[RMDB]
RNA sequence: GGGAACGACUCGAGUAGAGUCGAAAAGGGGUCUUCGUGACAUGUUCCGGGGUGGCUUUUGACGAGCUGAAGCCUCCACGGCUCGAUAAGCCAUACGGAACAACAGCACGAAGACGGAGGCACCCAAAACAACAGCCAUGUUCGCAUGGCUGUUGAACAGGUCUAUGUAGUUCGCUACAUAGACCUGAAAAGAAACAACAACAACAAC
Reactivity to 2A3 in 0.01 (KOAc 150mM, MgCl2 10mM, bicine 150mM(pH8.5), 24C), signal-to-noise 4, nucleotides 027 to 156: g050g000g030g010u000c000u000u010c000g010u010g070a140c080a240u150g000u000u010c000c010g010g010g110g030u030g020g000c030u060u090u150u190g160a080c020g000a000g000c000u000g020a080a010g030c000c020u060c010c000a030c010g000g000c000u000c000g040a050u070a140a030g000c000c000a010u010a020c010g000g020a010a000c010a010a010c030a020g030c000a000c000g000a000a000g000a000c000g000g020a010g000g000c020a070c020c010c020a020a090a000a020c010a000a000c000a000g000c000c000a010u010g040u040u090c290g000c130a000u000g000g000c000u000g000u000u000g000a020a010
Reactivity to DMS in 0.01 (KOAc 150mM, MgCl2 10mM, bicine 150mM(pH8.5), 24C), signal-to-noise 1, nucleotides 027 to 156: g020g040g030g040u000c000u000u000c020g010u000g000a060c050a300u000g010u000u000c000c000g030g020g040g080u010g010g000c010u000u000u000u000g030a210c020g020a060g020c010u020g000a030a160g010c040c020u020c000c010a300c060g000g000c010u000c010g000a100u000a080a050g020c000c000a090u010a070c000g000g000a010a020c000a020a040c070a100g000c060a010c000g030a050a010g000a030c020g020g010a020g090g070c030a200c040c020c000a100a070a040a210c000a020a000c000a010g030c020c000a000u000g020u000u000c300g000c020a030u000g010g000c020u000g000u000u000g000a080a300

Structure probing data (2A3 and DMS) for a 207-nucleotide construct.
2A3 is a SHAPE reagent: it acylates the 2'-hydroxyl of flexible nucleotides of all four kinds.
The DMS profile rests on 2,871 reads.
The RNA was probed in 150 mM KOAc, 10 mM MgCl2 and 150 mM bicine (pH 8.5) at 24 C.